Chemical mapping of a 207-nucleotide RNA with 2A3. The RNA was probed in 150 mM KOAc, 10 mM MgCl2 and 150 mM bicine (pH 8.5) at 24 C. For 2A3 the reverse transcriptase was SuperScript II with manganese. The 2A3 profile rests on 707 reads.

RNA sequence: GGGAACGACUCGAGUAGAGUCGAAAAACAUGCAGGGAUGCUGCUUAGCUGCUGGCUGCCAUGUUCUCCAGGAGCUCAGCACUGGGGAGCCACGGUGCAGCAGGACCUGGCACCCGGGAAGCUGCUGAAUGAGCACUCGGGCGCCCAAAGCUGACGAAGCCGCAGGCUGAUUCGUCAGCCUGCGGCUAAAAGAAACAACAACAACAAC
Reactivity to 2A3 in 0.01 (KOAc 150mM, MgCl2 10mM, bicine 150mM(pH8.5), 24C), signal-to-noise 1, nucleotides 027 to 156: a000c090a020u270g000c000a000g070g030g000a020u010g010c000u010g000c000u130u120a030g000c010u160g000c030u100g160g000c050u060g100c000c020a110u130g000u040u020c000u020c000c000a000g070g050a020g010c030u060c090a040g010c000a000c000u000g000g000g000g000a000g010c060c010a100c130g010g000u090g000c010a000g000c000a000g000g170a060c000c000u000g030g010c000a050c000c000c000g010g000g030a200a080g020c020u170g000c000u080g040a110a180u240g060a120g020c000a010c020u000c010g030g000g010c020g060c000c000c030a070a070a000g000c010u030g010a000c010g070a060